Chemical mapping of a 177-nucleotide RNA with 2A3 and DMS.
The RNA was probed in 150 mM KOAc, 10 mM MgCl2 and 150 mM bicine (pH 8.5) at 24 C.
Values are in units of 0.01, from 0 to 300, in steps of 10.
For 2A3 the reverse transcriptase was SuperScript II with manganese.
The DMS profile rests on 2,111 reads.

[RMDB]
RNA sequence: GGGAACGACUCGAGUAGAGUCGAAAAACGGAUAGAUUCGUCUAUCCGUGCAUCUCAUAACAGACAGAGAAAGUCUGCUAUGAUCUCACUUAGAUAAAGAGAAGAGAGUCGAGUUCGCUCGACUCAAGGAAGCAUACUUGUUCGCAAGUAUGCUUCCAAAAGAAACAACAACAACAAC
Reactivity to 2A3 in 0.01 (KOAc 150mM, MgCl2 10mM, bicine 150mM(pH8.5), 24C), signal-to-noise 4, nucleotides 027 to 126: a010c010g020g010a010u000a000g020a010u020u020c140g030u010c100u000a010u000c000c000g000u000g000c010a090u010c010u000c060a010u000a020a000c000a000g020a000c020a000g260a000g160a300a200a020g020u000c000u000g010c000u010a010u020g070a090u000c010u000c010a080c040u110u140a050g070a210u170a270a160a010g120a030g050a150a050g110a000g000a000g010u000c000g000a000g010u020u080c210g020c050u010c000g000a000c000u000c000a010a000
Reactivity to DMS in 0.01 (KOAc 150mM, MgCl2 10mM, bicine 150mM(pH8.5), 24C), signal-to-noise 3, nucleotides 027 to 126: a040c000g000g000a000u000a000g010a040u000u030c170g020u000c010u000a000u000c000c000g020u000g020c110a090u010c100u020c000a010u000a010a000c000a010g010a010c000a040g020a270g000a120a150a070g000u000c000u000g000c020u000a000u000g010a050u000c020u000c020a070c150u000u010a120g000a120u020a100a060a080g000a100g010a120a140g010a200g000a020g000u000c000g000a020g020u000u030c210g010c000u000c000g000a010c000u000c010a020a040